[RMDB]
RNA sequence: GGGAACGACUCGAGUAGAGUCGAAAAGGGUUUGCAUUACAUCAAUAGUAACAUGAGCAGAAGUAAACAGAACAAGAAGUACUGCGGUUAUUCAAGUUCAAAGUUCACACUAUCGCAAUAAAGGGAAUAUUACUACAGUAUUCGUACUGUAGUAAUAAAAAGAAACAACAACAACAAC
Reactivity to DMS in 0.01 (KOAc 150mM, MgCl2 10mM, bicine 150mM(pH8.5), 24C), signal-to-noise 9, nucleotides 027 to 126: g010g020g010u000u000u000g020c050a090u010u000a050c060a070u010c080a070a080u000a090g010u000a050a060c090a080u000g000a080g010c030a060g000a060a080g010u000a050a060a050c080a100g000a040a030c030a040a260g000a050a040g010u000a030c040u000g030c120g030g000u000u000a100u000u000c040a030a300g010u000u000c030a040a080a100g010u000u000c050a040c080a070c070u000a050u000c060g010c060a050a060u010a030a060a080g000g000g010a090a120
Reactivity to 2A3 in 0.01 (KOAc 150mM, MgCl2 10mM, bicine 150mM(pH8.5), 24C), signal-to-noise 7, nucleotides 027 to 126: g060g000g010u060u080u100g030c040a030u040u110a060c020a050u080c050a050a120u070a110g060u050a040a050c030a080u080g030a020g030c040a020g020a160a000g060u090a020a050a050c040a040g010a030a000c010a030a040g050a050a000g030u010a010c020u030g040c030g080g000u020u020a050u060u050c020a060a000g010u000u000c000a080a070a020g030u060u050c040a030c000a010c060u070a060u170c030g000c060a020a050u090a160a070a010g050g020g030a070a060